[RMDB]
RNA sequence: GGGAACGACUCGAGUAGAGUCGAAAAUGGGUAAGCCGAUCCUAAGGGACGGGGUAACCCCGGCAGACAGCGCGAUCUCGCGUGUUGCCCGAAAGGGAAUCGGGUUAAGAUUUCCCGAGCCGGGACGCUGUAAACGAGCAUUCGUGCUCGUUUACAGAAAAGAAACAACAACAACAAC
Reactivity to 2A3 in 0.01 (KOAc 150mM, MgCl2 10mM, bicine 150mM(pH8.5), 24C), signal-to-noise 1, nucleotides 027 to 126: u140g000g000g070u090a100a010g080c010c010g020a240u000c000c020u020a150a130g030g020g000a000c000g000g010g010g030u080a100a110c000c000c000c020g000g000c010a030g010a130c030a050g040c020g000c020g030a140u140c110u160c150g000c020g010u050g060u070u100g000c000c000c000g060a090a010a000g030g030g010a030a030u030c010g020g000g030u030u120a130a070g060a120u010u030u080c000c000c000g000a020g030c000c000g000g030g000a030c020g010
Reactivity to DMS in 0.01 (KOAc 150mM, MgCl2 10mM, bicine 150mM(pH8.5), 24C), signal-to-noise 4, nucleotides 027 to 126: u010g000g000g020u030a090a250g010c010c010g000a080u010c040c000u000a130a170g030g000g000a040c000g000g000g000g000u040a220a100c130c000c030c050g000g020c050a180g010a140c080a110g030c030g020c020g020a170u010c300u030c010g020c020g010u000g000u020u000g010c020c020c000g010a090a150a120g010g000g020a040a110u010c020g030g010g020u000u010a090a090g000a160u010u030u010c000c000c010g010a110g010c090c000g000g010g010a110c140g030